[RMDB]
RNA sequence: GGGAACGACUCGAGUAGAGUCGAAAAUCACCCUCCUCCAAGCCUCAGAAUAUUACGAAGCACCAUUCACAAUCUCCGACGGAGUGUAUGGAUCCACUUUCUUUGUGGCUACAGGGUUUCACGGGUUGCACGUAAUCAUCGGAUCUACUUUCCUAGCCACUAAUGGCAGCUUCGGCUGCCAUUAGUGAAAAGAAACAACAACAACAAC
Reactivity to 2A3 in 0.01 (KOAc 150mM, MgCl2 10mM, bicine 150mM(pH8.5), 24C), signal-to-noise 1, nucleotides 027 to 156: u110c020a030c050c000c000u030c000c000u000c030c010a080a010g000c010c000u140c080a060g080a150a040u130a020u220u090a120c150g080a040a020g010c050a020c030c010a040u080u040c020a080c060a130a150u090c070u000c100c080g160a170c190g000g020a080g010u050g010u050a040u030g040g040a050u020c010c030a010c040u020u200u120c020u140u120u100g010u030g030g010c000u030a020c020a090g050g000g000u010u080u030c070a020c000g050g030g020u010u040g030c080a030c110g060u100a060a010u100c070a050u120c020g010g010a070u000c040u080a060c050u060u090u030c030c000u080a120g030c010